RNA sequence: GGGAACGACUCGAGUAGAGUCGAAAACAUGAUAAUAUGUCUGACAACUACUAAUAGGAUGGGAAAGCAUGCCGUCGGAAUCUAUGUGGACGAGGAUGGGAAAGCAUGCAGUCAGUCGCGCCAUCCGAAACGUACGAGCGUGAUACAGGCGAAGUGGAUUCCUAAGACCAUUCGUGGUCUUAGGAAUAAAAGAAACAACAACAACAAC
Reactivity to DMS in 0.01 (KOAc 150mM, MgCl2 10mM, bicine 150mM(pH8.5), 24C), signal-to-noise 4, nucleotides 027 to 156: c040a080u000g020a170u010a080a110u010a080u000g030u000c020u000g010a100c060a100a180c020u000a080c020u010a110a120u000a140g010g000a080u010g020g010g010a120a090a180g030c020a020u000g030c030c010g000u000c020g020g020a160a050u000c040u000a080u010g020u010g030g010a050c030g010a300g020g010a030u000g020g030g000a050a060a140g000c010a030u000g010c020a090g000u010c050a100g000u000c060g010c040g000c000c000a050u010c030c030g010a040a060a060c130g020u010a070c070g020a130g020c040g020u000g010a120u000a050c020a060g020g010c020g000a070a080g020u000g010g000
Reactivity to 2A3 in 0.01 (KOAc 150mM, MgCl2 10mM, bicine 150mM(pH8.5), 24C), signal-to-noise 7, nucleotides 027 to 156: c020a030u080g110a070u150a200a050u140a150u180g030u060c040u040g020a010c010a120a040c050u130a010c020u050a050a130u030a160g030g010a020u020g000g010g060a070a060a010g000c000a010u020g020c020c020g050u080c010g040g030a020a000u020c030u040a100u220g170u190g090g000a010c030g020a030g040g010a020u030g050g000g070a030a080a050g010c000a010u040g000c010a010g080u090c020a010g070u060c030g000c030g010c050c000a000u000c000c020g040a030a030a000c060g040u100a030c070g020a040g060c030g020u040g020a030u050a150c040a050g010g020c020g010a080a020g060u070g030g050